The record gives the reactivity of an RNA of 207 nucleotides to 2A3.
The RNA was probed in 150 mM KOAc, 10 mM MgCl2 and 150 mM bicine (pH 8.5) at 24 C.
The 2A3 profile rests on 492 reads.
Values cover nucleotides 27 to 156.
RNA sequence: GGGAACGACUCGAGUAGAGUCGAAAAGAAAGCGUUGUUCAAGUCAAGUUCAUGGACAACUUCAGUAGCGGUAGCUGGCUCAAGUUUCGGUCAUAUUUGUCGAAUCUCUCAGACAACGCACAUGAUCUCGAUGAGAACCUGACCUUCAGCAAUACUGCUCAGCCAUGUACUUCGGUACAUGGCUGAGAAAAGAAACAACAACAACAAC
Reactivity to 2A3 in 0.01 (KOAc 150mM, MgCl2 10mM, bicine 150mM(pH8.5), 24C), signal-to-noise 1, nucleotides 027 to 156: g040a010a070a000g060c070g040u030u010g040u020u080c050a120a040g000u000c020a000a050g030u040u060c020a090u070g030g020a020c030a050a010c050u050u060c080a110g010u060a000g010c010g100g000u040a000g010c050u050g000g030c050u050c060a040a040g000u000u040u050c110g000g010u030c000a000u040a080u070u020u120g000u000c000g000a060a130u050c040u000c000u030c100a000g010a010c040a070a060c020g050c050a090c030a150u120g020a100u030c050u000c140g070a040u080g000a000g000a050a040c000c090u050g040a040c000c050u080u160c010a010g020c010a040a130u090a210c030u040g000